[RMDB]
The data come from the RNA Mapping Database (RMDB), library M2PK90. An RNA of 177 nucleotides, treated with DMS and read out base by base. The RNA was probed in 150 mM KOAc, 10 mM MgCl2 and 150 mM bicine (pH 8.5) at 24 C.

RNA sequence: GGGAACGACUCGAGUAGAGUCGAAAAUGUGUGCUCGAGAGCCUCCCUGUCCGACAGAGCUUUUAGAUCUUCUGAUCUUUCCCUGGAGGAUAUCGCUUAUGCUUGAAGCGAUUCUCGGAAUAAUUAAUACACUCUUGGACUUCGGUCCAAGAGUGUAAAAAGAAACAACAACAACAAC
Reactivity to DMS in 0.01 (KOAc 150mM, MgCl2 10mM, bicine 150mM(pH8.5), 24C), signal-to-noise 1, nucleotides 027 to 126: u020g010u000g030u000g040c040u010c020g010a070g000a140g010c040c020u030c020c000c080u010g000u020c020c010g000a100c040a040g000a090g000c290u000u000u000u000a020g010a020u000c010u020u020c300u030g010a050u000c020u000u000u000c010c000c000u010g010g000a140g000g010a070u000a030u000c000g020c000u000u010a100u020g020c270u000u010g010a040a010g000c000g010a010u000u010c020u010c030g020g010a090a070u000a100a090u000u010a090a240
DMS adducts were read by reverse transcription with MarathonRT.